[RMDB]
RNA sequence: GGGAACGACUCGAGUAGAGUCGAAAACAUGUAACCUCUCCAGGUAUAAAUAAAAGAACCAUUAAUGCUGUAAGUAUCAGGCCAUAUGUGCUGUGCGUUAAUGCCUCAAAGAUCCAGAGUACAGCCCCAUCGAACAGUUGUUCGCAACUGUUCGAUGAAAAGAAACAACAACAACAAC
Reactivity to DMS in 0.01 (KOAc 150mM, MgCl2 10mM, bicine 150mM(pH8.5), 24C), signal-to-noise 2, nucleotides 027 to 126: c050a070u000g010u000a070a170c080c020u000c060u010c080c060a120g010g010u000a120u000a050a090a080u000a060a090a070a140g010a050a040c090c020a030u010u000a030a050u010g000c020u000g000u000a110a070g050u000a050u010c090a040g010g010c080c090a070u020a070u010g010u000g000c030u000g010u000g000c070g020u000u010a080a030u000g000c070c060u000c070a030a060a140g000a050u000c070c040a080g020a070g000u000a070c080a090g000c030c000c030
Reactivity to 2A3 in 0.01 (KOAc 150mM, MgCl2 10mM, bicine 150mM(pH8.5), 24C), signal-to-noise 2, nucleotides 027 to 126: c020a030u100g030u070a080a060c010c020u060c020u020c050c000a020g060g060u030a060u040a160a160a030u200a070a120a040a040g030a040a010c050c000a030u000u110a090a020u080g030c040u030g070u120a130a030g020u040a090u190c010a000g070g030c040c020a090u070a060u220g080u060g000c060u030g000u040g030c010g000u000u040a060a040u080g030c000c010u030c040a070a080a000g040a030u050c040c010a000g020a020g020u030a010c000a030g000c000c000c000